[RMDB]
RNA sequence: GGGAACGACUCGAGUAGAGUCGAAAACUUGCCCGCGCUCGCCGGCUUCAGAUGUGGGGCUGGAUCCAGAUGUGGGAGCCGGAUCCAGAUGUGGGAGCCAGACAGAUCUCUGGGGGCUGGGACAUGGACCUAUUUAAUCGUUCGCGAUUAAAUAGGUAAAAGAAACAACAACAACAAC
Reactivity to DMS in 0.01 (KOAc 150mM, MgCl2 10mM, bicine 150mM(pH8.5), 24C), signal-to-noise 4, nucleotides 027 to 126: c100u000u010g010c020c010c020g010c130g010c060u000c070g030c020c020g020g010c030u010u000c030a070g020a060u010g010u000g000g010g010g010c050u000g010g010a050u000c010c010a080g000a100u010g020u000g010g010g000a090g010c030c040g000g010a040u010c010c020a030g010a120u000g020u010g000g000g000a100g000c020c020a060g000a100c090a090g000a110u010c100u010c040u010g010g000g010g010g030c040u010g010g000g000a080c090a040u010g000g010
Reactivity to 2A3 in 0.01 (KOAc 150mM, MgCl2 10mM, bicine 150mM(pH8.5), 24C), signal-to-noise 3, nucleotides 027 to 126: c000u030u090g050c000c000c000g020c030g040c010u060c040g150c040c050g000g010c000u040u050c020a040g040a240u100g050u100g170g020g100g010c030u050g020g010a020u000c000c010a060g050a190u120g150u180g170g050g020a020g060c040c020g020g010a000u000c010c000a020g030a200u050g060u120g100g040g010a040g020c000c000a000g020a040c020a020g090a110u090c060u020c030u110g070g020g000g040g000c000u030g000g000g020a030c020a060u080g050g030